[RMDB]
RNA sequence: GGGAACGACUCGAGUAGAGUCGAAAACCGUAUCGGUUCGCCGAUACGGAAAAGUUAAUGCAGCUAACACACAUCUUAAGCAUGGCGGUGGUAUCGCUGGUGGGACUCCCCAGUUCGCUGGGGAGAAGCUUGACAUCAUAUUCGUAUGAUGUCAAGCAAAAGAAACAACAACAACAAC
Reactivity to 2A3 in 0.01 (KOAc 150mM, MgCl2 10mM, bicine 150mM(pH8.5), 24C), signal-to-noise 3, nucleotides 027 to 126: c000c000g010u010a000u000c010g010g060u060u040c130g060c080c010g000a000u000a010c000g010g000a020a080a010a010g060u100u080a080a030u190g080c020a000g020c040u040a080a010c020a000c020a000c000a080u020c030u170u180a080a050g070c060a040u030g050g010c090g060g010u030g020g050u060a020u160c050g010c030u020g020g020u060g030g020g030a020c000u000c000c000c000c000a000g000u030u070c110g010c060u000g000g000g000g000a010g010a000a000
Reactivity to DMS in 0.01 (KOAc 150mM, MgCl2 10mM, bicine 150mM(pH8.5), 24C), signal-to-noise 3, nucleotides 027 to 126: c000c000g020u020a010u000c000g000g020u010u010c210g020c000c000g010a000u000a000c010g000g000a000a030a060a110g020u000u010a070a100u000g010c010a020g010c040u000a070a100c060a060c070a070c070a060u010c050u000u000a110a110g010c110a040u000g000g000c120g000g010u010g000g010u000a060u010c130g010c020u000g000g030u000g010g000g010a300c000u010c000c000c000c000a000g010u010u000c140g020c010u000g000g010g010g000a010g000a040a050